The record gives the reactivity of an RNA of 177 nucleotides to 2A3 and DMS. Values cover nucleotides 27 to 126. Source: RMDB library RFM100, as collected in RNAgym.
RNA sequence: GGGAACGACUCGAGUAGAGUCGAAAAGAGGGUUUCGUCGUCCCAGGACCACACGAACUCAAGCGGCGCGGUGUGCUUCGCCAGAGUCAGCUUGCCGCCGCGCAGGCGGAAAGCGCUGCGCGUGUAGCUAUCCAGUGGCCUUCGGGCCACUGGAUAGAAAAGAAACAACAACAACAAC
Reactivity to 2A3 in 0.01 (KOAc 150mM, MgCl2 10mM, bicine 150mM(pH8.5), 24C), signal-to-noise 2, nucleotides 027 to 126: g080a030g020g070g000u040u140u140c010g080u030c020g070u010c010c000c000a010g080g060a050c050c010a000c000a010c030g050a130a040c020u060c080a120a010g000c040g080g030c000g020c060g010g010u120g070u140g050c000u120u160c050g030c050c030a040g010a010g100u040c030a010g020c000u050u070g060c000c000g040c020c000g000c000g060c010a000g080g000c020g000g100a120a030a000g060c090g000c010u020g000c020g000c010g000u040g040u060a030g080
Reactivity to DMS in 0.01 (KOAc 150mM, MgCl2 10mM, bicine 150mM(pH8.5), 24C), signal-to-noise 1, nucleotides 027 to 126: g000a120g000g040g040u000u000u000c040g050u010c070g000u020c000c020c020a090g000g000a120c110c050a060c090a080c150g000a080a070c110u010c050a090a140g000c100g010g000c000g020c090g010g050u030g000u000g000c030u080u000c060g000c060c060a000g000a070g000u000c110a100g020c000u000u000g010c020c030g000c060c050g000c130g000c080a000g000g000c000g000g020a020a140a170g000c060g000c000u000g000c080g010c030g050u010g000u040a150g000
Conditions: 150 mM KOAc, 10 mM MgCl2 and 150 mM bicine (pH 8.5), 24 C.